Chemical mapping of a 177-nucleotide RNA with 2A3 and DMS. The reactions ran in a buffer of 150 mM KOAc, 10 mM MgCl2 and 150 mM bicine (pH 8.5), at 24 C.
[RMDB]
RNA sequence: GGGAACGACUCGAGUAGAGUCGAAAAGGAUGCUGGCAAAUCUGGUAUGAAGGUUGAGACCCCGAGGAGAGGCAGGCCUGGGGGACCGUGCAGCAGCUGUGCCCACCUAGGACCACAGGGCUGGUGGGACACCCAUUAAUUUCGAUUAAUGGGUGUCAAAAGAAACAACAACAACAAC
Reactivity to 2A3 in 0.01 (KOAc 150mM, MgCl2 10mM, bicine 150mM(pH8.5), 24C), signal-to-noise 5, nucleotides 027 to 126: g020g010a040u070g000c040u050g030g060c020a030a030a140u050c040u060g030g020u120a110u190g080a100a040g060g010u090u100g040a060g040a170c020c010c010c040g060a040g000g010a090g010a030g010g060c030a020g030g010c000c020u030g000g000g000g000g030a020c030c030g050u060g030c020a030g000c010a010g030c030u040g030u080g070c010c010c000a040c000c040u060a070g070g020a070c020c030a050c060a070g020g040g050c030u040g030g020u030g030g030
Reactivity to DMS in 0.01 (KOAc 150mM, MgCl2 10mM, bicine 150mM(pH8.5), 24C), signal-to-noise 9, nucleotides 027 to 126: g000g010a060u000g010c030u000g010g010c060a070a070a060u000c040u000g010g010u000a080u010g000a100a050g000g010u000u000g010a170g010a200c030c010c010c030g010a070g010g000a100g000a100g010g010c080a080g000g000c030c020u010g010g010g010g010g010a060c070c070g010u000g010c040a060g010c050a040g010c040u000g010u000g010c040c010c020a080c090c070u000a090g010g000a170c070c030a060c070a080g000g010g010c050u000g000g010u000g000g000